[RMDB]
RNA sequence: GGGAACGACUCGAGUAGAGUCGAAAAUAGUUACCUCAUCGACAACGAAUAGAGAAAAUCGAAAUGAUGGUAUCAACUGAUAAGUUUUUUACUUGCACUAAAACUUCCGAGGUAUUCGAACUGGUUCAUACUGACAACGGUGAUUUCAUGCAUGACGUAGGAUAUCAACCUUCGGGUUGAUAUCCUAAAAAGAAACAACAACAACAAC
Reactivity to 2A3 in 0.01 (KOAc 150mM, MgCl2 10mM, bicine 150mM(pH8.5), 24C), signal-to-noise 2, nucleotides 027 to 156: u140a020g010u000u010a010c000c020u010c000a030u030c030g080a060c030a130a080c040g160a130a090u170a130g100a040g000a050a140a030a030u060c010g040a090a010a000u060g040a070u170g000g010u010a000u110c030a060a040c030u100g060a120u080a190a110g030u060u020u030u020u000u070a030c040u000u110g000c030a010c060u070a010a050a000a130c020u180u020c000c080g000a050g010g000u030a110u030u190c050g020a030a030c040u090g030g030u060u060c060a010u090a100c020u110g090a070c040a010a050c080g030g000u030g010a090u000u070u250c000a000u110g010c000a000u030g030a010c060g040
Reactivity to DMS in 0.01 (KOAc 150mM, MgCl2 10mM, bicine 150mM(pH8.5), 24C), signal-to-noise 1, nucleotides 027 to 156: u030a140g000u000u000a110c030c010u000c000a110u010c030g020a200c130a040a110c010g020a130a200u000a180g000a200g020a060a060a120a060u000c060g000a060a040a090u010g000a100u000g000g010u020a080u000c080a040a100c050u000g010a190u000a050a090g030u000u000u000u000u000u000a070c110u000u020g020c090a090c080u000a010a030a060a030c040u010u000c040c000g050a150g000g000u000a080u000u000c090g000a100a120c060u000g030g000u000u020c040a030u000a080c070u000g010a090c050a080a270c030g000g000u000g020a100u030u000u000c070a130u000g030c000a080u020g000a030c080g040
Source: RMDB library OK3TST, as collected in RNAgym. Structure probing data (2A3 and DMS) for a 207-nucleotide construct. The reactions ran in a buffer of 150 mM KOAc, 10 mM MgCl2 and 150 mM bicine (pH 8.5), at 24 C. DMS adducts were read by reverse transcription with MarathonRT.